[RMDB]
Chemical mapping of a 207-nucleotide RNA with 2A3 and DMS. The RNA was probed in 150 mM KOAc, 10 mM MgCl2 and 150 mM bicine (pH 8.5) at 24 C. Reactivities are given for positions 27 through 156.
RNA sequence: GGGAACGACUCGAGUAGAGUCGAAAAGAACUCGUAAAUUCGCUGCUGCAAACUUAUAGUUGCCAACGACGACAACUACGCUCUAGCUGCUUAAUGCGGCUAGCAGUCGCUAGGGGAUGCCUGUAAACCCGAAACGACUGUCAGAUAGAACAGGAUCCUAACCACAAUACUUCGGUAUUGUGGUUAGAAAAGAAACAACAACAACAAC
Reactivity to 2A3 in 0.01 (KOAc 150mM, MgCl2 10mM, bicine 150mM(pH8.5), 24C), signal-to-noise 4, nucleotides 027 to 156: g040a030a020c030u030c070g070u120a040a130a120u190u050c050g010c020u070g020c040u060g060c090a130a110a110c060u170u160a120u080a220g010u020u010g010c030c020a110a040c070g080a020c010g020a020c020a090a030c040u090a050c090g030c060u000c000u040a000g000c000u020g000c000u090u270a160a040u300g000c000g010g000c000u000a000g000c010a000g010u000c010g000c050u020a020g030g000g000g000a000u070g030c000c010u010g000u040a030a090a080c000c000c010g010a030a010a000c000g000a000c000u000g010u000c010a010g050a250u130a050g040a060a000c010a010g000g010a010u040c000
Reactivity to DMS in 0.01 (KOAc 150mM, MgCl2 10mM, bicine 150mM(pH8.5), 24C), signal-to-noise 1, nucleotides 027 to 156: g000a160a170c010u010c020g060u020a100a120a100u010u010c020g080c020u000g000c010u020g010c010a080a110a080c090u010u000a090u000a020g020u000u010g000c010c040a160a270c150g020a050c000g000a040c040a050a080c030u000a020c090g000c100u000c030u000a020g020c000u000g010c020u000u000a080a100u010g000c000g030g000c010u000a000g030c000a030g000u010c020g000c000u000a300g020g020g040g010a100u000g000c020c040u020g010u000a010a090a210c010c000c000g000a060a090a030c020g000a060c020u000g000u020c060a120g010a130u010a090g000a090a080c040a080g020g010a160u010c000